[RMDB]
RNA sequence: GGGAACGACUCGAGUAGAGUCGAAAACAUGCCGAUGUUUGUGCCUUCACCGUUGAAAACAUCAGCGCCCAUUGGCGGUAUGCCGCCAUCCGGCAUCUUCACGGAGAUCAGCACUGCUUUGCCGCUGCAUGCCACCAUUAUUCGUAAUGGUGGCAUGAAAAGAAACAACAACAACAAC
Reactivity to DMS in 0.01 (KOAc 150mM, MgCl2 10mM, bicine 150mM(pH8.5), 24C), signal-to-noise 5, nucleotides 027 to 126: c140a090u020g010c040c050g010a030u000g000u000u000u020g010u010g000c030c030u010u020c080a110c050c040g030u010u040g020a050a050a050a090c100a060u020c060a060g010c100g000c010c000c040a150u020u030g000g000c020g010g020u040a080u050g010c010c030g010c040c040a040u030c190c130g010g010c040a060u030c060u010u000c040a100c070g000g010a090g010a070u010c130a170g010c020a040c020u010g010c060u000u010u010g000c030c040g000c090u000g010
Reactivity to 2A3 in 0.01 (KOAc 150mM, MgCl2 10mM, bicine 150mM(pH8.5), 24C), signal-to-noise 9, nucleotides 027 to 126: c050a040u140g030c020c020g050a040u040g030u030u110u070g080u080g030c020c010u080u090c050a050c050c020g040u060u160g090a040a040a030a020c030a050u090c040a010g040c010g030c020c020c010a090u020u070g020g000c030g000g010u160a100u250g140c010c000g000c010c000a010u030c050c000g010g000c010a040u020c040u060u050c040a020c050g030g000a060g010a070u060c040a010g010c010a010c040u050g010c010u050u060u080g030c030c030g040c040u060g020